[RMDB]
This 207-nucleotide RNA was probed chemically with 2A3. The data come from the RNA Mapping Database (RMDB), library OK3TST. The RNA was probed in 150 mM KOAc, 10 mM MgCl2 and 150 mM bicine (pH 8.5) at 24 C. Values cover nucleotides 27 to 156. Reactivities are rounded to 0.1 and cut off at 0 and 3.
RNA sequence: GGGAACGACUCGAGUAGAGUCGAAAAUGUUUGAGAUACUUCGAAGGCAGGUGCCUGGGGAUCGGUAGCGGGAGAUAUCUCAAAGGUAGGAGUGGAUAUCGGAGAGGGUGACACUUCGAAGGCUGGAGAGAGAGUAAGCGCCAGCGAGUGCGGUGAACCCAGGUAACAUGUUCGCAUGUUACCUGGGAAAAGAAACAACAACAACAAC
Reactivity to 2A3 in 0.01 (KOAc 150mM, MgCl2 10mM, bicine 150mM(pH8.5), 24C), signal-to-noise 1, nucleotides 027 to 156: u160g030u040u020u010g030a030g060a050u060a100c050u060u100c090g030a100a050g030g000c090a030g090g130u090g120c030c030u040g000g030g000g050a110u100c070g000g050u040a000g050c090g000g000g020a070g010a010u050a000u020c050u050c100a050a050a000g060g000u130a020g000g060a030g010u020g010g020a050u060a060u140c060g010g010a120g000a000g050g000g050u020g000a000c000a010c080u060u040c020g030a040a040g020g000c040u020g040g000a080g000a000g010a000g000a010g090u030a140a020g030c050g000c080c000a000g000c000g010a070g020u050g000c000g040g030u050g010a030a050